An RNA of 177 nucleotides, treated with DMS and 2A3 and read out base by base. Conditions: 150 mM KOAc, 10 mM MgCl2 and 150 mM bicine (pH 8.5), 24 C. Source: RMDB library OK2TST, as collected in RNAgym.

[RMDB]
RNA sequence: GGGAACGACUCGAGUAGAGUCGAAAAAGAAGCGGCUCGCGCAGUACGCGAUGGAUGUGCGUGCGGCGCUCGACAAGAUCGUCGAGCUCAAGCCGGAGGAAGUCGCGAAAGGGGAAGUGUGAGCGUAAGCGUAUAGUCAUUUCGAUGACUAUACGCUAAAAGAAACAACAACAACAAC
Reactivity to DMS in 0.01 (KOAc 150mM, MgCl2 10mM, bicine 150mM(pH8.5), 24C), signal-to-noise 9, nucleotides 027 to 126: a090g010a140a120g010c050g010g010c010u000c030g020c020g020c020a110g010u010a080c020g010c020g010a070u000g010g010a210u030g010u000g010c010g020u010g010c010g000g020c300g000c000u000c000g000a010c010a110a180g020a130u010c210g010u000c000g000a020g020c020u000c090a110a130g010c010c020g000g010a060g000g000a270a140g000u000c020g010c020g000a030a100a130g010g000g010g000a130a110g010u000g010u000g000a070g010c050g010u000a090
Reactivity to 2A3 in 0.01 (KOAc 150mM, MgCl2 10mM, bicine 150mM(pH8.5), 24C), signal-to-noise 9, nucleotides 027 to 126: a000g140a090a010g110c050g100g030c030u010c020g000c000g000c030a030g080u100a030c020g000c010g010a010u040g050g020a050u070g050u130g230c050g060u150g030c000g010g000c010g000c000u000c000g000a000c010a050a070g070a300u210c100g010u010c000g000a000g000c000u020c060a030a030g000c000c010g010g010a020g060g020a040a020g010u020c010g000c020g070a090a020a010g060g000g010g020a040a100g020u020g010u020g040a010g010c020g040u080a060